[RMDB]
RNA sequence: GGGAACGACUCGAGUAGAGUCGAAAAAUUUGCGCCACGCGGCGCGGCGGCCUCUCCUCGCUAUUGCGCGUUGCCGUUCACAGAGCUGCCUCCAGGGCUUGUUUUGGUAAUGCCUUUCUCCCAUUUAUUCUACUGCAAGAUUCGUCUUGCAGUAGAAAAAAGAAACAACAACAACAAC
Reactivity to 2A3 in 0.01 (KOAc 150mM, MgCl2 10mM, bicine 150mM(pH8.5), 24C), signal-to-noise 6, nucleotides 027 to 126: a000u110u140u170g010c010g010c030c010a120c150g130c140g010g000c010g000c000g040g010c000g000g020c000c010u010c000u010c000c000u010c010g050c030u090a090u100u180g040c060g000c010g020u020u040g040c010c010g030u080u070c050a040c020a080g070a020g030c020u030g030c020c010u020c030c030a060g020g020g000c010u030u070g040u030u090u040u050g030g010u070a050a020u100g020c000c000u030u040u020c050u020c000c000c000a020u050u100u090a090
Reactivity to DMS in 0.01 (KOAc 150mM, MgCl2 10mM, bicine 150mM(pH8.5), 24C), signal-to-noise 5, nucleotides 027 to 126: a090u010u020u010g020c040g020c000c010a090c250g010c160g000g010c010g010c030g000g000c040g010g010c040c030u010c020u010c020c030u000c060g010c080u020a070u030u020g010c070g000c050g000u000u010g010c010c030g000u010u010c110a070c100a110g010a100g010c040u000g010c040c000u000c040c050a090g010g010g010c050u010u010g000u020u010u010u010g010g000u010a050a070u010g010c020c010u000u010u010c090u000c000c000c010a150u020u010u010a130